[RMDB]
RNA sequence: GGGAACGACUCGAGUAGAGUCGAAAAGCGCGUAGGCGGAUUAUCAAGUCUCUUGUGAAAUCUAAUGGCUUAACCAUUAAACUGCUUGGGAAACUGAUAGUCUAGAGUGAGGGAGAGGCAGAUGGAACUAGCGUAGUCCAUUCGUGGACUACGCUAGAAAAGAAACAACAACAACAAC
Reactivity to DMS in 0.01 (KOAc 150mM, MgCl2 10mM, bicine 150mM(pH8.5), 24C), signal-to-noise 2, nucleotides 027 to 126: g010c060g000c050g030u030a090g000g020c040g000g000a020u000u000a020u000c000a020a030g000u020c010u000c000u010u010g020u000g000a110a070a070u020c100u000a010a020u000g000g000c250u050u060a170a240c000c000a010u010u020a000a010a040c050u010g000c000u010u000g000g050g030a080a010a040c040u010g000a010u000a020g000u000c000u000a140g000a120g010u010g000a190g010g020g010a020g000a080g000g000c080a000g000a100u030g000g000a090a140
Reactivity to 2A3 in 0.01 (KOAc 150mM, MgCl2 10mM, bicine 150mM(pH8.5), 24C), signal-to-noise 3, nucleotides 027 to 126: g030c050g000c040g050u040a060g020g030c020g000g010a020u040u000a010u030c010a000a000g090u000c000u010c000u010u050g010u000g070a080a060a020u050c020u010a000a010u020g000g020c040u130u120a060a100c000c000a000u000u010a030a050a030c070u210g020c000u010u020g000g000g000a000a020a010c000u000g000a010u010a010g000u030c010u010a040g020a020g090u100g040a050g010g010g000a080g000a000g000g050c020a030g020a070u090g030g040a020a070